Source: RMDB library OK2TST, as collected in RNAgym. The record gives the reactivity of an RNA of 177 nucleotides to DMS and 2A3. The RNA was probed in 150 mM KOAc, 10 mM MgCl2 and 150 mM bicine (pH 8.5) at 24 C.
RNA sequence: GGGAACGACUCGAGUAGAGUCGAAAAGAAGCCCUACGGCUAUAAAGGUUUUGGCGAAGUCGCGGUGUUCGUGUUCUUCGGCCUGGUCGCUGUGCUCGGCACCGAAUACACCCAAGCAUUGCGGGUACCAGCAUUUAGGAUUCGUCCUAAAUGCUGGAAAAGAAACAACAACAACAAC
Reactivity to DMS in 0.01 (KOAc 150mM, MgCl2 10mM, bicine 150mM(pH8.5), 24C), signal-to-noise 4, nucleotides 027 to 126: g020a110a150g020c000c010c040u010a130c110g010g010c050u000a080u010a070a140a110g010g000u000u000u000u000g020g030c030g010a050a040g010u000c060g020c020g000g020u020g010u020u010c050g040u010g000u000u000c030u000u000c020g020g020c060c030u000g000g010u000c030g010c050u010g040u000g010c040u010c080g010g030c080a100c070c020g000a080a080u010a100c140a110c060c020c080a060a080g000c050a060u010u000g030c080g000g010g020u000a100
Reactivity to 2A3 in 0.01 (KOAc 150mM, MgCl2 10mM, bicine 150mM(pH8.5), 24C), signal-to-noise 3, nucleotides 027 to 126: g010a060a010g060c000c000c000u060a050c070g070g000c040u060a050u130a280a160a100g100g040u040u110u270u230g070g000c050g020a030a020g030u060c030g000c030g000g060u100g130u240u300c020g000u010g030u020u050c020u030u010c000g050g000c000c020u000g050g000u030c020g000c110u030g030u040g070c010u010c010g020g000c060a030c040c010g020a050a030u120a040c040a050c010c010c020a020a010g050c070a110u040u110g000c050g040g020g020u070a120

DMS adducts were read by reverse transcription with MarathonRT.